[RMDB]
RNA sequence: GGGAACGACUCGAGUAGAGUCGAAAAAGACCAGACCGUUCAUACAGAACUGGCGAUCGUUCGGCGUAUCGCCAAAAUCACCGCCGUAAGCCGACCACGGGUUGCCGUUUUCAUCAUAUUUAAUCAACGUCGUAUUAUGCUUCGGCAUAAUACGACGAAAAGAAACAACAACAACAAC
Reactivity to DMS in 0.01 (KOAc 150mM, MgCl2 10mM, bicine 150mM(pH8.5), 24C), signal-to-noise 1, nucleotides 027 to 126: a030g020a170c080c000a120g020a070c040c040g030u020u000c050a110u000a100c240a070g060a050a060c080u010g000g000c000g030a010u030c060g000u000u000c100g040g040c000g000u000a010u000c040g000c030c060a000a020a080a120u040c040a120c060c020g000c040c040g030u010a090a080g010c000c030g000a050c050c090a030c160g040g000g040u010u010g030c040c030g000u000u000u030u000c010a070u000c150a060u000a100u000u030u000a120a070u010c120a020a170